Notes:
This 177-nucleotide RNA was probed chemically with 2A3. For 2A3 the reverse transcriptase was SuperScript II with manganese. The RNA was probed in 150 mM KOAc, 10 mM MgCl2 and 150 mM bicine (pH 8.5) at 24 C.
RNA sequence: GGGAACGACUCGAGUAGAGUCGAAAAAGCGAGUGAACACUCCUAGAAAAUAGGAGUGAAACCGGUCUUAAACACUCGCAAGUAGUUAAACAAAGCAUAGCAUAGCUAUGCAGAUCGGUACUACAAAGACUAGCCGAUGAUUCGUCAUCGGCUAGUCAAAAGAAACAACAACAACAAC
Reactivity to 2A3 in 0.01 (KOAc 150mM, MgCl2 10mM, bicine 150mM(pH8.5), 24C), signal-to-noise 2, nucleotides 027 to 126: a000g000c010g000a000g000u030g000a080a000c000a000c010u000c000c000u040a010g120a120a270a020a000u030a000g000g000a000g010u000g000a040a000a000c000c000g010g000u010c020u030u150a080a080a030c000a000c010u000c000g000c000a010a020g060u100a010g000u030u170a130a120a040c120a080a040a000g000c000a000u020a000g000c090a210u060a110g000c000u000a000u030g000c000a020g010a000u020c020g000g090u020a110c080u040a020c020a060a070a000
Values cover nucleotides 27 to 126.